This 177-nucleotide RNA was probed chemically with DMS.
RNA sequence: GGGAACGACUCGAGUAGAGUCGAAAAGAUCUUAGGUUCGCCUAAGAUCAAAAGAGCUAGCAAGGUUGAGCUAGCAAAGAUCGAAAGAUCAAAUGAACCAAAAAAGGAUAAAGUUCGCUUUAUCCAAGUGUAGUACGUUGUUCGCAACGUACUACACAAAAGAAACAACAACAACAAC
Reactivity to DMS in 0.01 (KOAc 150mM, MgCl2 10mM, bicine 150mM(pH8.5), 24C), signal-to-noise 1, nucleotides 027 to 126: g010a000u000c000u010u010a000g000g000u000u000c300g010c000c000u000a000a000g000a000u000c000a020a070a080a160g010a290g000c020u000a020g020c000a070a130g010g020u000u020g010a240g020c000u010a020g000c000a000a060a070g000a000u000c010g010a100a030a080g000a000u000c000a030a060a110u000g010a070a050c060c020a000a040a060a060a200a130g010g000a000u000a000a010a030g000u000u010c240g020c020u000u000u000a000u000c000c000a100a030
For DMS the reverse transcriptase was MarathonRT. The data come from the RNA Mapping Database (RMDB), library M2PK50.